[RMDB]
RNA sequence: GGGAACGACUCGAGUAGAGUCGAAAACAUGGGGAACUACAUCUGUGUCGCGACUUCGAUUCUCGCCAGGGCCUGGUCCUGUAGCUCAGUUGGUAGAGCAAGCUGUUCCCCGGACACUUGUCGUCAUAAAAGUUGCCCCCGUUCGCGGGGGCAACAACUAUUUACGAACCUUCGGGUUCGUAAAUAGAAAAGAAACAACAACAACAAC
Reactivity to 2A3 in 0.01 (KOAc 150mM, MgCl2 10mM, bicine 150mM(pH8.5), 24C), signal-to-noise 1, nucleotides 027 to 156: c040a120u180g040g000g000g000a050a050c070u110a000c060a110u080c060u070g050u040g040u070c000g030c030g070a030c030u040u020c030g050a060u090u030c060u010c020g030c020c000a000g000g010g030c020c180u120g090g050u020c010c000u020g030u050a000g010c000u000c010a050g040u090u150g090g170u120a060g010a010g020c010a010a010g060c030u050g000u010u030c040c000c000c000g000g000a030c040a010c030u080u210g050u140c070g030u040c060a020u140a270a110a010a020g000u000u000g020c000c020c010c040c010g050u020u030c190g010c040g000g000g000g000g020c000a010a000c000a000a000
Reactivity to DMS in 0.01 (KOAc 150mM, MgCl2 10mM, bicine 150mM(pH8.5), 24C), signal-to-noise 1, nucleotides 027 to 156: c090a130u000g020g000g040g000a050a040c060u010a090c060a100u020c060u000g030u000g010u000c080g000c060g000a080c030u000u000c040g000a260u000u000c070u010c020g050c140c030a200g020g010g010c020c090u010g040g020u000c030c030u010g040u000a070g010c020u000c030a090g050u010u030g000g010u050a160g010a100g050c020a060a070g030c050u000g010u000u000c000c000c000c010g000g000a060c080a050c120u000u000g020u020c010g000u010c030a060u010a070a070a060a160g020u010u010g000c010c000c000c010c000g090u000u000c280g000c040g000g030g020g080g000c000a000a000c000a000a090